[RMDB]
An RNA of 177 nucleotides, treated with 2A3 and read out base by base. 2A3 adducts were read by reverse transcription with SuperScript II with manganese. For 2A3, 425 sequencing reads were counted.

RNA sequence: GGGAACGACUCGAGUAGAGUCGAAAAUCUUCUACACCUUUUGAAAAUCCGACAUACUGGUCUAAUUACGCUGAAGCUUUAAGUAUGAUGUUGAUUCCAGGUUCAUUAGUCUUUCUAUUCGGUAGAACGAAAUAGGCCUCUUCGGAGGCCUAUUUCGAAAAGAAACAACAACAACAAC
Reactivity to 2A3 in 0.01 (KOAc 150mM, MgCl2 10mM, bicine 150mM(pH8.5), 24C), signal-to-noise 1, nucleotides 027 to 126: u040c020u000u070c040u040a000c050a040c020c010u130u000u070u210g070a120a080a000a100u060c030c040g040a010c030a080u210a020c000u100g020g000u040c020u080a050a090u170u010a040c070g010c090u040g100a040a010g010c010u100u070u080a130a020g100u010a030u040g030a030u150g010u120u000g060a050u000u120c050c030a030g050g040u000u070c030a050u060u000a060g000u000c000u030u100u000c020u080a150u010u020c030g020g000u010a030g020a130a020